RNA sequence: GGGAACGACUCGAGUAGAGUCGAAAAGAAAGAAAGAAAGAUUUCAGGGGGAAGCUAUGAAGCUUAGGGCACAAAAAUGGUUGCUAAUCCUAAGCUGAGCUAAUGGCAAGACCGGCCUCCGUUAUAACUCGGUGAUCCCUUUCGAGGGAUCACCGAGAAAAGAAACAACAACAACAAC
Reactivity to DMS in 0.01 (KOAc 150mM, MgCl2 10mM, bicine 150mM(pH8.5), 24C), signal-to-noise 1, nucleotides 027 to 126: g000a150a010a130g010a220a020a150g010a150a080a100g000a160u000u040u000c020a140g120g010g010g010g000a150a010g000c000u000a060u050g000a060a140g000c000u000u000a010g030g050g000c180a010c230a000a030a010a140a130u000g000g000u030u000g000c040u050a100a000u030c000c000u000a030a000g000c000u000g000a010g010c030u030a060a020u000g000g000c010a080a100g020a300c000c100g000g000c000c000u000c000c010g010u000u020a080u080a070a080
This 177-nucleotide RNA was probed chemically with DMS. The DMS profile rests on 1,388 reads.